This 177-nucleotide RNA was probed chemically with DMS. The RNA was probed in 150 mM KOAc, 10 mM MgCl2 and 150 mM bicine (pH 8.5) at 24 C. For DMS the reverse transcriptase was MarathonRT. The DMS profile rests on 1,982 reads. It was measured as part of the RMDB library M2PK50.
RNA sequence: GGGAACGACUCGAGUAGAGUCGAAAACUCUGCAUAUUCGUAUGCAGAGAAAUAACGGUCGGCUCAUGCAGCUAGUCGAACAUGCAGCUCGACCUUUUGGUAAAAACCGGAGGUUCGCCUCCGGUAAUCAUUGUCAAGGGUUCGCCCUUGACAAUGAAAAAGAAACAACAACAACAAC
Reactivity to DMS in 0.01 (KOAc 150mM, MgCl2 10mM, bicine 150mM(pH8.5), 24C), signal-to-noise 2, nucleotides 027 to 126: c010u020c000u000g000c010a000u000a030u000u020c190g010u000a010u000g000c000a010g000a040g010a030a040a050u010a090a090c180g010g010u000c000g010g000c010u000c000a010u000g000c050a300g000c030u020a060g000u020c050g020a130a210c000a030u000g020c120a000g000c000u000c030g010a010c010c000u000u000u000u000g010g020u010a050a030a030a120a050c000c010g000g010a020g010g000u000u000c230g020c020c000u000c000c000g000g000u010a000a050